[RMDB]
RNA sequence: GGGAACGACUCGAGUAGAGUCGAAAAGGAGCGAGGCAAAGAAGAAGUCCAGGUAUGAAACCACUGGGGACAUUGUGGACAAUGGUUCAAAAUGGAUGUGGGAAGUCAAGUCUUCAGCACAGUGGAAGGAUACUUUAUCCAGUUUCUUCCACAUAAGAGUCCGUCAAAUAUUCGUAUUUGACGGACUAAAAGAAACAACAACAACAAC
Reactivity to 2A3 in 0.01 (KOAc 150mM, MgCl2 10mM, bicine 150mM(pH8.5), 24C), signal-to-noise 3, nucleotides 027 to 156: g000g010a050g040c070g010a000g030g040c050a100a050a070g050a020a030g040a040a000g060u070c090c090a040g060g040u170a070u100g100a120a040a000c010c020a040c100u070g020g010g020g010a010c040a090u170u140g040u080g050g000a010c040a060a060u140g060g000u020u030c010a050a070a040a070u100g020g010a040u030g050u040g030g010g040a010a030g020u030c020a050a000g000u000c020u120u040c050a020g000c050a050c020a060g020u030g000g000a010a000g000g000a040u120a260c010u070u160u120a140u100c050c000a000g000u010u000u000c000u000u010c000c010a010c000a030u080a040a030g040
Reactivity to DMS in 0.01 (KOAc 150mM, MgCl2 10mM, bicine 150mM(pH8.5), 24C), signal-to-noise 2, nucleotides 027 to 156: g000g020a040g000c040g000a040g020g030c070a070a080a140g020a100a060g000a060a090g030u010c070c040a210g000g020u000a090u020g030a070a120a110c040c040a070c060u010g000g020g010g030a050c030a120u010u000g030u010g030g010a030c050a080a080u000g050g030u000u000c020a010a030a080a250u020g000g010a130u000g000u000g010g000g000a010a030g040u000c020a060a070g010u000c020u000u000c060a130g070c080a090c080a150g020u000g010g010a070a000g000g000a070u010a040c010u010u000u000a110u070c210c140a080g000u000u000u000c000u000u000c000c000a060c030a060u000a090a200g000